[RMDB]
RNA sequence: GGGAACGACUCGAGUAGAGUCGAAAAGAUAUGGACUCCGAGUGGACAUGCCUGCGACUCGGAAACGAGUCGACAGGCAACAGCCACCGGAGUCCUAAGUCAAAACUGGCUGGUUCGCCAGCCAGAAUCAUUUUAUUGAGUUCGCUCAAUAAAAUGAAAAAGAAACAACAACAACAAC
Reactivity to 2A3 in 0.01 (KOAc 150mM, MgCl2 10mM, bicine 150mM(pH8.5), 24C), signal-to-noise 2, nucleotides 027 to 126: g010a010u010a020u020g000g010a000c000u000c000c010g050a130g020u000g000g090a110c180a290u300g010c030c010u010g000c010g000a000c020u000c000g000g060a030a000a000c030g010a000g020u040c010g120a150c030a000g010g010c030a020a010c000a000g010c010c000a000c010c010g040g030a010g010u000c000c000u000a000a000g010u020c000a000a000a060a060c010u010g000g000c000u030g000g100u070u080c300g090c110c000a000g000c000c000a000g000a000a060
Reactivity to DMS in 0.01 (KOAc 150mM, MgCl2 10mM, bicine 150mM(pH8.5), 24C), signal-to-noise 3, nucleotides 027 to 126: g000a020u010a050u010g000g000a010c000u000c000c010g000a170g020u000g010g010a020c120a200u000g000c010c000u000g010c000g000a010c000u000c010g010g000a000a000a020c000g000a030g020u000c010g010a100c000a010g000g030c020a010a020c110a140g000c000c000a010c000c010g000g000a000g000u000c010c000u000a000a050g000u000c010a180a090a120a240c010u000g000g010c000u000g000g020u000u020c260g020c000c000a030g010c000c000a010g010a060a110